Source information: This 207-nucleotide RNA was probed chemically with DMS and 2A3. For DMS, 2,977 sequencing reads were counted. In probing experiments dimethyl sulfate is read out at A N1 and C N3, which are open when not base-paired. The 2A3 profile rests on 705 reads. Values cover nucleotides 27 to 156.
RNA sequence: GGGAACGACUCGAGUAGAGUCGAAAACUCCAUUUUCCCCAUUUUCUUAUCUCCCUGACCAAAAUUGCUUUGACUUCUAAAUGUUUCUGCUUCCCAGAAUGCACCUGACUUAUGAAAUGGGGAUAAUACUCCCAGGAAAUAGCGCAGGACAUCACAAUAAAUUUACCAUGUUCGCAUGGUAAAUUUAAAAAGAAACAACAACAACAAC
Reactivity to DMS in 0.01 (KOAc 150mM, MgCl2 10mM, bicine 150mM(pH8.5), 24C), signal-to-noise 2, nucleotides 027 to 156: c040u020c050c050a220u000u000u000u000c010c000c020c050a120u000u000u000u000c050u000u010a100u000c030u000c030c020c030u020g040a220c020c050a060a020a100a070u010u000g030c040u010u000u000g020a120c060u020u010c040u010a080a070a100u020g010u000u010u000c020u000g030c070u000u000c010c010c020a200g070a060a060u000g030c010a060c000c020u010g000a100c090u010u000a060u020g010a060a170a180u000g010g010g020g000a030u000a070a100u000a300c080u000c000c000c010a100g030g000a170a100a110u000a000g020c010g030c040a020g040g000a060c020a030u000c010a040c090a080a220
Reactivity to 2A3 in 0.01 (KOAc 150mM, MgCl2 10mM, bicine 150mM(pH8.5), 24C), signal-to-noise 2, nucleotides 027 to 156: c050u040c060c050a100u170u060u030u020c060c020c050c050a050u070u060u150u040c050u180u150a170u090c040u040c040c030c020u050g020a060c080c010a070a070a210a300u120u130g020c070u140u010u040g040a040c020u070u060c030u170a140a070a080u040g010u020u070u010c020u050g010c010u030u020c000c000c040a050g020a080a070u100g010c030a060c070c030u080g050a160c000u100u140a010u090g040a000a020a040u010g000g000g010g000a000u040a050a030u000a050c030u040c050c000c000a000g010g050a000a070a020u050a000g010c100g010c050a000g000g000a030c000a000u040c010a020c010a050a070